[RMDB]
This 207-nucleotide RNA was probed chemically with 2A3 and DMS. The reactions ran in a buffer of 150 mM KOAc, 10 mM MgCl2 and 150 mM bicine (pH 8.5), at 24 C. Values cover nucleotides 27 to 156. For 2A3, 1,713 sequencing reads were counted.

RNA sequence: GGGAACGACUCGAGUAGAGUCGAAAAUGCUGAUUCGUCAGCAGCGUAGCGUACUACUCACGAUGAAAGGUUCUGGAGCUCUACGCGUCCCAAAUAGGACCUGUAGAGCGUUGAAAGAACCUGGAGUGAGUAUCGCAUAUACCUUGUUCGCAAGGAAGGUAUCGACAAUGUUCGCAUUGUCGAUACCAAAAGAAACAACAACAACAAC
Reactivity to 2A3 in 0.01 (KOAc 150mM, MgCl2 10mM, bicine 150mM(pH8.5), 24C), signal-to-noise 2, nucleotides 027 to 156: u070g000c000u000g010a010u010u100c290g150u020c120a000g000c000a000g030c080g090u110a030g000c000g040u060a070c020u000a000c000u070c000a000c020g240a280u090g060a040a090a000g020g010u000u000c000u010g040g080a020g010c000u000c000u010a000c000g000c070g040u000c010c000c020a160a150a050u260a040g020g000a000c000c030u020g000u000a000g000a000g000c000g030u050u010g000a030a030a000g000a000a000c000c000u000g000g000a010g010u000g020a020g000u000a000u030c000g000c000a000u050a020u020a080c000c010u000u010g050u090u130c180g000c090a000a000g070g030a070a080
Reactivity to DMS in 0.01 (KOAc 150mM, MgCl2 10mM, bicine 150mM(pH8.5), 24C), signal-to-noise 2, nucleotides 027 to 156: u000g020c010u000g000a100u000u000c300g010u020c010a040g040c010a070g020c100g020u000a110g010c060g000u010a110c060u000a000c000u010c000a030c000g010a170u020g000a130a070a050g000g000u000u000c010u000g000g000a300g020c010u000c000u000a030c020g020c300g000u020c000c000c000a110a180a210u000a030g000g020a020c000c010u000g010u000a020g040a040g010c020g000u000u000g010a230a130a100g010a030a020c000c000u010g020g000a270g000u010g040a050g030u000a010u000c020g000c010a130u000a100u000a040c010c000u010u000g010u000u000c170g000c040a050a060g020g030a230a200